An RNA of 207 nucleotides, treated with 2A3 and DMS and read out base by base. Reactivities are rounded to 0.1 and cut off at 0 and 3. The DMS profile rests on 2,916 reads. Source: RMDB library RNAMAK, as collected in RNAgym. Conditions: 150 mM KOAc, 10 mM MgCl2 and 150 mM bicine (pH 8.5), 24 C. Reactivities are given for positions 27 through 156.

RNA sequence: GGGAACGACUCGAGUAGAGUCGAAAAGCGACGCUUCGGCGUCGCAUAUCCUAAGUCAGCAGUCGUCGCCAACAGGGAGCGUGGUCGGAAACGACCACGCGUUGAUCUGUUGGAACUACGACGAUGCUGAUAUGGAGAAGCUUUCUUUCGAGAAAGCACGUAGACACAGAUUCGUCUGUGUCUACGUAAAAGAAACAACAACAACAAC
Reactivity to 2A3 in 0.01 (KOAc 150mM, MgCl2 10mM, bicine 150mM(pH8.5), 24C), signal-to-noise 1, nucleotides 027 to 156: g030c000g000a000c000g020c000u080u160c270g090g000c000g010u010c000g020c000a000u030a020u010c000c000u040a110a030g010u000c000a000g000c000a020g270u050c000g000u000c000g040c020c000a000a000c000a000g010g000g000a020g000c010g010u000g000g000u010c010g030g040a080a050a040c010g000a000c000c000a000c000g000c000g000u010u010g000a000u000c000u000g000u000u000g010g000a000a010c030u120a040c030g000a000c000g000a000u000g000c000u000g000a000u010a030u060g040g010a130g040a120a030g010c000u000u000u010c010u070u180u140c250g040a080g000a020a000a000g000c010
Reactivity to DMS in 0.01 (KOAc 150mM, MgCl2 10mM, bicine 150mM(pH8.5), 24C), signal-to-noise 1, nucleotides 027 to 156: g010c000g010a000c000g030c000u000u000c300g050g040c000g070u000c000g000c000a010u000a040u000c000c010u000a070a300g010u000c000a000g060c020a020g020u010c000g000u000c060g020c010c010a020a000c020a000g030g030g010a040g010c030g060u000g000g000u000c000g020g000a190a150a200c010g010a040c010c010a000c000g020c000g000u000u000g000a020u000c010u000g000u000u000g010g000a030a030c060u000a290c000g030a040c000g020a040u020g040c020u030g000a010u000a160u000g000g010a070g000a170a110g020c010u000u000u000c000u000u010u000c240g000a060g000a050a020a000g030c000